[RMDB]
RNA sequence: GGGAACGACUCGAGUAGAGUCGAAAAACACUGAGCAGUAUAUAAUAUGGCCAUGGUACAUUUGGCUAGGUUUUAUAGCUGGCUUGCCGUAGACAAUUAUGCUUUGCUGUAUGACCAGUUGCGAAAACGAAAAACAGUCUUUCGAGACUGUUUUUCGAAAAGAAACAACAACAACAAC
Reactivity to 2A3 in 0.01 (KOAc 150mM, MgCl2 10mM, bicine 150mM(pH8.5), 24C), signal-to-noise 1, nucleotides 027 to 126: a010c040a020c060u110g060a000g010c030a020g070u040a070u050a030u030a300a070u070a130u110g000g010c000c000a020u000g030g000u240a140c050a120u040u010u160g000g000c010u010a020g000g060u070u040u040u060a150u080a050g000c000u000g020g030c040u020u020g030c040c010g000u020a000g010a010c040a100a080u120u050a120u130g000c070u050u090u090g030c070u020g050u070a080u050g100a130c000c000a000g000u020u030g070c000g000a080a040a040a040
Reactivity to DMS in 0.01 (KOAc 150mM, MgCl2 10mM, bicine 150mM(pH8.5), 24C), signal-to-noise 1, nucleotides 027 to 126: a080c030a060c090u010g000a120g030c010a070g010u000a070u000a090u000a040a040u000a130u000g000g000c010c010a030u000g020g000u000a070c210a080u000u000u000g000g010c020u000a010g010g030u030u000u000u000a050u000a040g030c000u010g020g010c070u000u000g000c020c060g010u000a040g010a050c060a050a060u010u020a090u010g040c090u010u010u010g010c080u000g010u000a050u010g010a160c050c010a060g000u010u010g010c060g000a040a030a050a140
Structure probing data (2A3 and DMS) for a 177-nucleotide construct. For 2A3, 668 sequencing reads were counted.